[RMDB]
RNA sequence: GGGAACGACUCGAGUAGAGUCGAAAAUAUGAUCGCAGAAAUCCACAGUGCCUUUUCCUCACUGUUCUACAAAUUGUUUUAGGGUUCCUAUUAAUAUGUGUGAGCACGUAUUGGAAGCAAACAUUGAGAUCUAUGGUAUGUUCGCAUACCAUAGAUCAAAAGAAACAACAACAACAAC
Reactivity to DMS in 0.01 (KOAc 150mM, MgCl2 10mM, bicine 150mM(pH8.5), 24C), signal-to-noise 4, nucleotides 027 to 126: u030a090u010g000a050u020c110g000c060a060g000a090a080a080u000c060c040a060c090a020g010u030g010c050c060u030u030u000u020c050c030u010c110a080c060u010g000u000u000c040u000a090c120a050a050a130u010u010g000u010u000u020u010a130g030g000g010u000u000c010c020u000a100u050u050a020a030u000a030u010g010u010g010u020g010a140g040c040a050c070g000u000a040u000u000g000g010a050a070g000c100a120a040a020c130a100u020u010g020a300
Reactivity to 2A3 in 0.01 (KOAc 150mM, MgCl2 10mM, bicine 150mM(pH8.5), 24C), signal-to-noise 9, nucleotides 027 to 126: u300a100u140g080a050u070c050g000c060a020g100a080a110a030u030c020c000a030c010a040g030u060g040c010c010u060u060u030u040c000c000u040c010a060c020u020g030u060u020c020u040a070c040a050a190a160u130u100g100u050u090u080u130a090g070g020g000u040u040c000c010u050a060u120u140a100a020u060a030u060g030u000g020u040g080a070g080c010a010c030g020u030a070u020u090g040g040a040a040g040c080a030a060a080c050a130u060u140g060a080